[RMDB]
RNA sequence: GGGAACGACUCGAGUAGAGUCGAAAAGAUCGAGCCGCACAGUUUCCGGGUCACGAAGAAGGAAGCACUCCCAUUCCUGCCGGACAAGGUGUACAAGCGCAUAUACUUCGAAAUGUCGCCGGAGCAAAUAGUGCCUUUUUUUCGAAAAAGGCACUAUAAAAGAAACAACAACAACAAC
Reactivity to DMS in 0.01 (KOAc 150mM, MgCl2 10mM, bicine 150mM(pH8.5), 24C), signal-to-noise 3, nucleotides 027 to 126: g010a090u020c040g000a120g030c030c040g020c100a090c120a110g010u000u000u000c010c010g010g000g020u010c070a070c120g020a100a120g010a060a100g000g000a050a040g010c090a110c090u000c020c010c010a250u000u010c040c010u000g000c050c060g030g030a050c170a080a060g000g020u000g000u000a040c090a110a080g030c050g000c040a060u000a100u000a130c020u000u000c040g010a070a070a080u000g010u000c020g000c030c030g000g000a070g020c070a040a070
Reactivity to 2A3 in 0.01 (KOAc 150mM, MgCl2 10mM, bicine 150mM(pH8.5), 24C), signal-to-noise 1, nucleotides 027 to 126: g070a020u090c070g020a030g030c030c010g020c040a060c000a050g040u050u100u050c020c000g010g040g000u070c060a030c060g050a020a100g030a020a030g090g030a050a020g020c000a040c050u000c030c010c010a010u020u000c010c010u040g030c040c010g000g000a010c020a030a060g040g000u020g000u010a080c090a070a080g000c030g010c030a030u110a010u040a160c020u030u070c030g070a100a120a110u100g030u060c060g000c040c000g040g000a040g040c030a040a100